[RMDB]
RNA sequence: GGGAACGACUCGAGUAGAGUCGAAAAGAAAGAAAGAAAGAAACCGUCUCUGCUAGUCUCACGGUAACCACGUUGAAAUCGCAACGAAAGAAGCACGCACUCAACUUCAACGGCUUAACGAGUGCAAAAAACUUACUGAUCUUCGGAUCAGUAAGAACCGUAAACCUAAGUUCGCUUAGGUUUACGGAAAAGAAACAACAACAACAAC
Reactivity to DMS in 0.01 (KOAc 150mM, MgCl2 10mM, bicine 150mM(pH8.5), 24C), signal-to-noise 1, nucleotides 027 to 156: g030a080a060a050g000a070a060a150g020a070a090a130g000a120a080a080c000c030g030u000c000u000c020u010g050c040u000a080g000u000c000u010c040a110c010g000g020u000a120a100c030c010a090c030g020u000u000g000a030a030a140u000c160g000c000a010a030c010g030a090a070a120g010a080a050g050c060a030c090g000c000a060c000u000c000a060a300c020u000u000c000a060a170c100g010g000c030u010u000a020a180c300g000a030g020u000g040c010a000a000a040a040a050a040c000u000u000a030c000u020g010a000u020c000u000u000c300g050g000a050u000c000a020g030u000a000a000g010a030a030
Reactivity to 2A3 in 0.01 (KOAc 150mM, MgCl2 10mM, bicine 150mM(pH8.5), 24C), signal-to-noise 2, nucleotides 027 to 156: g050a000a080a010g050a050a090a010g090a070a160a000g070a070a120a030c020c020g050u010c050u010c030u080g070c020u030a050g060u050c010u010c060a030c030g040g000u050a050a060c020c000a020c040g000u000u020g040a090a100a070u180c130g020c090a000a030c000g050a060a040a030g010a010a000g020c050a010c130g000c000a000c010u010c000a020a040c010u020u010c030a060a020c000g010g000c000u020u030a020a010c030g020a000g000u010g000c000a000a020a020a020a020a010c000u000u010a000c000u000g000a000u000c000u010u050c090g130g000a010u000c010a000g000u000a000a000g000a000a010
Chemical mapping of a 207-nucleotide RNA with DMS and 2A3.
The data come from the RNA Mapping Database (RMDB), library M2RFPK.
For 2A3, 1,875 sequencing reads were counted.
Values cover nucleotides 27 to 156.
DMS (dimethyl sulfate) methylates the pairing face of unpaired adenines and cytosines.
Reactivities are rounded to 0.1 and cut off at 0 and 3.
The reactions ran in a buffer of 150 mM KOAc, 10 mM MgCl2 and 150 mM bicine (pH 8.5), at 24 C.